Conditions: 150 mM KOAc, 10 mM MgCl2 and 150 mM bicine (pH 8.5), 24 C.
This 177-nucleotide RNA was probed chemically with 2A3 and DMS.
Reactivities are given for positions 27 through 126.
2A3 adducts were read by reverse transcription with SuperScript II with manganese.
Reactivities are rounded to 0.1 and cut off at 0 and 3.
RNA sequence: GGGAACGACUCGAGUAGAGUCGAAAAGAUAUGGAACGCUAAGUUCGAGGAUCACAGGUCCGUCGGAAACGACGGAGCCUGUGGGAGAACGAAGCGUUCCUAAGUCAAAGGGAGCUUCGGCUCCCAACUAUAGACGAGUGUUCGCACUCGUCUAUAGAAAAGAAACAACAACAACAAC
Reactivity to 2A3 in 0.01 (KOAc 150mM, MgCl2 10mM, bicine 150mM(pH8.5), 24C), signal-to-noise 2, nucleotides 027 to 126: g020a000u080a040u210g000g010a010a000c000g010c000u040a040a030g000u000u000c020g030a280g030g030a020u040c000a010c000a010g000g000u000c020c010g000u000c010g030g050a100a070a100c020g020a000c010g010g010a000g090c010c010u000g010u000g000g000g000a010g000a000a000c000g000a020a000g000c000g000u010u000c000c000u010a000a000g000u000c050a000a090a150g000g000g010a010g000c020u130u150c270g130g000c010u030c000c000c000a000a000
Reactivity to DMS in 0.01 (KOAc 150mM, MgCl2 10mM, bicine 150mM(pH8.5), 24C), signal-to-noise 4, nucleotides 027 to 126: g030a040u000a300u020g000g010a010a010c010g010c010u010a060a300g010u000u000c020g020a150g000g020a060u000c000a000c000a010g000g020u010c000c000g000u000c000g010g000a120a100a260c010g000a020c000g000g000a050g020c000c000u000g010u000g000g020g010a050g020a000a010c000g010a300a070g010c000g000u000u000c000c000u000a000a090g010u010c020a090a100a120g000g010g000a030g020c010u000u030c300g000g000c000u000c000c000c000a000a000